Chemical mapping of a 177-nucleotide RNA with 2A3 and DMS. Values are in units of 0.01, from 0 to 300, in steps of 10. 2A3 adducts were read by reverse transcription with SuperScript II with manganese. The reactions ran in a buffer of 150 mM KOAc, 10 mM MgCl2 and 150 mM bicine (pH 8.5), at 24 C. For DMS, 956 sequencing reads were counted.
[RMDB]
RNA sequence: GGGAACGACUCGAGUAGAGUCGAAAAAUAAAGAGCGUACAUCUCUCUCAGACUGUACGACAGUCUGACUCUCUGGUACAAUCGCUCAACGAGAGAGAGAGAGCGUUCAAAGAAGCGAGAAAAAAAAGAUUGUACGUGGAUUCGUCCACGUACAAUCAAAAGAAACAACAACAACAAC
Reactivity to 2A3 in 0.01 (KOAc 150mM, MgCl2 10mM, bicine 150mM(pH8.5), 24C), signal-to-noise 1, nucleotides 027 to 126: a010u180a000a080a070g020a010g030c020g000u010a080c050a230u000c020u010c000u010c010u000c020a000g000a020c000u020g030u140a070c060g050a040c150a010g000u000c010u010g050a020c000u000c010u010c000u050g090g000u030a000c060a070a230u080c030g000c010u020c020a010a000c050g040a000g000a020g000a020g000a020g000a010g000a000g000c020g010u000u010c080a070a100a000g070a010a020g090c050g010a050g090a140a020a020a010a010a000a000a020
Reactivity to DMS in 0.01 (KOAc 150mM, MgCl2 10mM, bicine 150mM(pH8.5), 24C), signal-to-noise 2, nucleotides 027 to 126: a090u000a090a090a190g010a010g010c010g000u000a110c150a210u000c010u010c000u000c150u030c010a030g010a030c000u000g000u000a140c280g010a140c010a010g000u000c020u010g010a300c020u000c000u010c010u000g010g000u000a070c170a070a120u000c030g000c050u000c070a220a010c060g010a030g000a020g000a100g010a100g000a030g000a090g000c040g000u000u000c010a060a060a090g010a090a040g010c000g000a100g010a000a010a000a070a080a080a070a090